The data come from the RNA Mapping Database (RMDB), library OK3TST. This 207-nucleotide RNA was probed chemically with DMS and 2A3. The reactions ran in a buffer of 150 mM KOAc, 10 mM MgCl2 and 150 mM bicine (pH 8.5), at 24 C. DMS (dimethyl sulfate) methylates the pairing face of unpaired adenines and cytosines.

RNA sequence: GGGAACGACUCGAGUAGAGUCGAAAAUUUGAGACCACGCUUGUGAGAGUUAUAUAAGUUUGCCUCAGUUAAUUAAGAUACAUGGGCUAGAAUUAAGUUGCCAUCUGUGUUAAUGAAUUUUUAAUAACAAGAUUGCUUGAAUUAGGAAAUAACUCAAUCGUAGGUAUUUAUUCGUAAAUACCUACGAAAAAGAAACAACAACAACAAC
Reactivity to DMS in 0.01 (KOAc 150mM, MgCl2 10mM, bicine 150mM(pH8.5), 24C), signal-to-noise 1, nucleotides 027 to 156: u030u000u010g000a160g000a140c050c060a090c090g020c070u020u010g000u000g030a200g010a130g020u000u000a040u000a100u020a060a110g000u000u000u010g030c050c030u000c040a070g010u000u000a020a130u000u000a030a090g010a170u000a080c080a040u000g000g010g020c020u000a050g010a100a100u000u000a060a120g030u000u030g000c010c000a100u000c030u000g040u010g030u020u000a040a110u010g010a050a070u030u000u000u000u000a000a220u010a070a080c050a070a160g000a120u000u000g000c010u010u000g000a080a140u000u000a120g000g000a040a030a080u000a080a170c010u010c000a010a290
Reactivity to 2A3 in 0.01 (KOAc 150mM, MgCl2 10mM, bicine 150mM(pH8.5), 24C), signal-to-noise 1, nucleotides 027 to 156: u050u050u130g030a060g020a020c010c050a020c060g060c040u100u080g030u030g070a080g000a010g050u050u000a030u010a040u090a260a190g060u050u050u030g050c000c000u080c040a000g020u000u010a010a090u020u120a120a000g000a050u140a040c060a130u110g030g000g010c000u000a000g050a110a020u250u180a020a270g080u210u020g010c000c030a000u020c030u000g030u000g020u080u020a070a100u030g070a030a120u000u070u000u190u140a000a120u060a080a000c000a010a020g000a060u000u030g000c030u010u040g050a050a000u110u000a020g000g010a000a100a170u070a130a050c010u040c000a060a030
DMS adducts were read by reverse transcription with MarathonRT. For DMS, 2,119 sequencing reads were counted.